[RMDB]
RNA sequence: GGGAACGACUCGAGUAGAGUCGAAAAGGAGUGACAGCAUCGAGGCUAUCAAAGUGGGCCAUAUCACCGAGGAUAUUAAUUACGGCAGUGCCUGCGUCCGGGGCGCGGGCGAAGGCUUCGACAAACCCUAGUAACAACAGUUCGCUGUUGUUACUAGAAAAGAAACAACAACAACAAC
Reactivity to DMS in 0.01 (KOAc 150mM, MgCl2 10mM, bicine 150mM(pH8.5), 24C), signal-to-noise 7, nucleotides 027 to 126: g010g000a050g010u000g010a060c080a090g020c080a090u000c060g010a090g000g020c060u000a090u000c110a040a110a120g020u000g000g000g010c030c060a080u000a050u000c070a090c070c050g000a120g010g000a060u000a060u010u010a070a100u010u010a100c110g010g000c040a070g000u000g010c010c010u000g010c020g010u010c050c070g010g010g010g010c050g000c020g000g000g000c020g010a040a090g000g000c020u010u000c030g010a050c170a080a070a110c130c070
Reactivity to 2A3 in 0.01 (KOAc 150mM, MgCl2 10mM, bicine 150mM(pH8.5), 24C), signal-to-noise 2, nucleotides 027 to 126: g070g020a040g040u080g020a030c020a040g040c010a060u060c030g040a040g030g000c020u060a040u200c090a080a080a030g070u110g040g000g000c030c000a050u040a030u080c050a060c070c060g030a060g100g010a030u030a040u210u240a210a080u150u120a040c040g020g010c020a020g040u010g120c000c000u010g020c010g010u040c050c050g040g020g050g000c050g000c010g020g000g000c000g000a020a010g040g000c000u020u030c050g020a030c040a030a040a060c000c000